RNA sequence: GGGAACGACUCGAGUAGAGUCGAAAAAUGGUGACGCCGUGCGGACCUAUCCAGCCAGGGGUGUCCGGACGUUCGACGCGACGGGUGACAGCAUCCGUCGAGCACGUCAUUCGCCCUUUGAUGCCGGUCUACCUAGGGCCUUCGGGCCCUGGGUAGGAAAAGAAACAACAACAACAAC
Reactivity to 2A3 in 0.01 (KOAc 150mM, MgCl2 10mM, bicine 150mM(pH8.5), 24C), signal-to-noise 9, nucleotides 027 to 126: a000u150g020g010u030g020a040c040g010c040c010g030u090g040c010g020g020a020c000c020u050a090u050c010c010a020g090c040c030a030g000g000g000g020u040g020u020c030c030g070g020a000c010g010u070u130c070g040a060c050g010c010g040a000c000g000g010g010u020g040a110c070a160g180c000a190u010c000c000g000u000c000g000a010g010c050a020c010g000u000c000a010u120u100c020g020c000c000c000u040u060u090g060a080u080g020c030c010g020g010
Reactivity to DMS in 0.01 (KOAc 150mM, MgCl2 10mM, bicine 150mM(pH8.5), 24C), signal-to-noise 9, nucleotides 027 to 126: a070u020g000g010u000g000a080c110g010c110c030g020u010g010c040g010g000a050c030c100u010a090u020c010c020a120g000c110c090a080g000g000g010g010u010g010u010c060c100g010g000a020c000g010u000u020c090g010a170c060g010c010g000a010c000g000g000g010u000g000a270c300a220g010c010a010u000c000c000g010u000c000g000a040g000c060a170c010g000u000c000a080u020u010c040g010c020c010c000u000u010u020g010a100u020g010c010c020g000g000

Source: RMDB library OK1LIB, as collected in RNAgym. Structure probing data (2A3 and DMS) for a 177-nucleotide construct. The reactions ran in a buffer of 150 mM KOAc, 10 mM MgCl2 and 150 mM bicine (pH 8.5), at 24 C. For 2A3 the reverse transcriptase was SuperScript II with manganese.